[RMDB]
RNA sequence: GGGAACGACUCGAGUAGAGUCGAAAAGGCUGGGCUGGGCUGAGCUGCAGUUUGGGAACCAGACCCUGCAUGUGUCCACCGUGCAGAUGUGGCUACUGCUGUAUCUCAACGACCUGAAGGUGGCCCAAGAUAUUACCCCUUUCGAGGGGUAAUAUCUAAAAGAAACAACAACAACAAC
Reactivity to DMS in 0.01 (KOAc 150mM, MgCl2 10mM, bicine 150mM(pH8.5), 24C), signal-to-noise 3, nucleotides 027 to 126: g010g010c120u000g020g000g020c080u000g000g020g050c040u000g000a040g030c050u000g000c000a020g010u010u000u000g010g000g010a090a170c030c030a020g000a190c180c100c020u000g000c020a010u010g010u000g020u000c100c120a080c170c020g000u000g000c040a020g000a030u010g010u000g000g000c030u010a210c050u010g000c020u010g010u010a020u010c010u010c020a030a060c090g010a150c020c020u020g000a100a090g000g010u000g000g020c000c030c040a090
Reactivity to 2A3 in 0.01 (KOAc 150mM, MgCl2 10mM, bicine 150mM(pH8.5), 24C), signal-to-noise 2, nucleotides 027 to 126: g090g030c070u040g000g040g010c030u090g080g000g000c010u000g010a000g020c020u020g030c010a010g000u170u290u210g050g020g000a040a030c000c010a000g020a120c040c000c000u000g000c020a000u040g070u010g080u090c060c020a060c080c010g000u030g000c020a010g010a040u060g050u060g240g000c000u060a020c040u100g010c000u030g010u000a020u000c020u010c020a050a100c060g140a180c000c010u050g140a130a050g140g050u070g040g010c000c000c010a010